[RMDB]
RNA sequence: GGGAACGACUCGAGUAGAGUCGAAAAGUAAAGCAUUUUCAUGCACCAGGUGAUGGGCUGAAUACCUCACAUGGGUUUCCCUUCUCAACAACCCUAGGAGGUUUACGGUUAUCAGCCUGGUUUCAGAGAAGGGGCAAUUGAAGCUUGGAGAACUCAAUAUUUACCACUCGUUCGCGAGUGGUAAAUAAAAAGAAACAACAACAACAAC
Reactivity to 2A3 in 0.01 (KOAc 150mM, MgCl2 10mM, bicine 150mM(pH8.5), 24C), signal-to-noise 1, nucleotides 027 to 156: g070u110a090a090a010g010c010a020u020u000u150u210c100a030u060g000c010a010c000c000a000g000g010u010g010a280u010g000g030g060c000u000g010a070a070u050a040c000c000u060c000a080c000a090u020g000g000g000u030u040u070c000c000c000u190u000c100u030c040a090a250c010a010a000c070c000c000u050a030g060g060a020g000g060u010u030u030a010c030g010g000u000u000a050u190c030a000g010c000c020u000g020g000u050u000u010c000a000g010a000g010a040a090g010g000g010g020c030a000a050u020u070g040a070a010g010c050u110u110g030g010a010g020a030a030c020u010c050a080a030
Reactivity to DMS in 0.01 (KOAc 150mM, MgCl2 10mM, bicine 150mM(pH8.5), 24C), signal-to-noise 1, nucleotides 027 to 156: g020u000a080a130a100g000c020a080u010u000u000u010c040a110u000g010c300a110c010c010a010g000g020u000g010a100u010g000g000g020c100u000g040a130a230u000a040c000c010u000c000a030c050a180u000g010g000g030u000u010u010c000c010c060u010u010c100u040c080a050a150c150a040a090c010c000c010u000a110g010g000a040g000g040u000u000u000a000c100g120g010u000u000a050u000c040a050g040c010c010u000g020g040u000u000u000c110a190g030a050g010a040a010g000g030g000g000c060a080a040u000u010g010a100a240g000c070u000u000g030g010a190g000a070a300c040u010c000a000a230